An RNA of 177 nucleotides, treated with DMS and 2A3 and read out base by base. 2A3 adducts were read by reverse transcription with SuperScript II with manganese. Conditions: 150 mM KOAc, 10 mM MgCl2 and 150 mM bicine (pH 8.5), 24 C.
[RMDB]
RNA sequence: GGGAACGACUCGAGUAGAGUCGAAAAGAGGCAGGAGAAUGGCGUGAACCCGGAAGGUGGAGCUUACAGUGAGCCGAAAUCGCGCCACUGCACUCCAGCCUGGACGACAGAGCAAGACUCUGUCUCACCUUAGGGCAGUAUUCGUACUGCCCUAAGGAAAAGAAACAACAACAACAAC
Reactivity to DMS in 0.01 (KOAc 150mM, MgCl2 10mM, bicine 150mM(pH8.5), 24C), signal-to-noise 4, nucleotides 027 to 126: g000a030g000g030c000a080g000g010a020g020a100a110u000g010g020c010g020u000g010a030a190c110c040c050g020g050a080a110g000g010u000g020g020a220g010c060u010u020a080c130a140g030u000g010a140g000c000c010g000a070a110a080u000c010g000c020g000c000c010a000c070u000g000c200a090c000u000c000c010a060g010c000c000u000g010g020a020c220g010a010c000a010g000a020g010c020a100a090g030a300c030u000c000u000g010u010c000u000c030a180
Reactivity to 2A3 in 0.01 (KOAc 150mM, MgCl2 10mM, bicine 150mM(pH8.5), 24C), signal-to-noise 2, nucleotides 027 to 126: g120a000g010g020c010a020g000g040a040g040a080a060u020g020g000c010g010u010g020a040a050c060c030c050g030g120a070a040g040g000u100g030g110a080g040c030u110u130a100c080a210g090u120g190a010g010c000c010g020a080a060a010u040c020g000c020g030c020c000a020c030u040g030c030a090c050u000c020c000a030g030c010c000u010g040g010a030c070g000a000c000a000g010a000g010c030a210a070g050a270c000u000c000u000g000u000c000u000c000a050